RNA sequence: GGGAACGACUCGAGUAGAGUCGAAAAUUGCUGAGGAGGAUGGAAUUGAUUCGAUGUCUUUUGAGAGAAUCCUUUUCCAGCCUUUGUUGCAACAACGUUUCAUGUGUCGCGAACAAGGAGGCAGUACUAGAACCGAGCGUGAGCAGAUUCAACGCCGGUAGUUUUAAAUAUUCGUAUUUAAAACUACAAAAGAAACAACAACAACAAC
Reactivity to 2A3 in 0.01 (KOAc 150mM, MgCl2 10mM, bicine 150mM(pH8.5), 24C), signal-to-noise 3, nucleotides 027 to 156: u060u030g020c030u070g020a070g070g010a000g010g010a040u010g020g020a000a020u000u020g010a020u070u000c040g040a090u120g250u130c120u100u300u300u300g150a130g000a000g000a040a000u050c050c000u030u050u050u000c000c000a020g000c030c000u040u040u040g080u110u060g000c010a020a040c010a000a060c050g020u030u070u060c080a090u110g040u030g020u130c030g000c010g030a040a020c040a080a080g030g000a020g010g030c030a010g010u040a040c030u050a040g070a100a010c040c030g010a040g010c010g010u000g000a020g020c050a030g030a140u160u170c030a070a070c100g040c080c030g060
Reactivity to DMS in 0.01 (KOAc 150mM, MgCl2 10mM, bicine 150mM(pH8.5), 24C), signal-to-noise 2, nucleotides 027 to 156: u000u000g020c010u010g000a170g010g010a020g010g040a020u000g010g000a060a030u000u010g010a120u000u000c030g010a240u010g020u000c090u000u000u010u020g020a130g020a300g010a050a050u000c030c040u000u000u000u000c010c010a050g000c010c000u020u000u000g000u000u000g010c010a050a060c040a060a070c060g000u000u010u000c040a090u000g010u000g030u000c050g020c070g030a090a100c060a060a120g040g010a120g010g010c010a080g020u000a100c070u000a120g000a080a080c020c020g000a130g020c020g030u000g010a180g020c020a170g000a200u000u000c020a100a100c030g010c020c030g030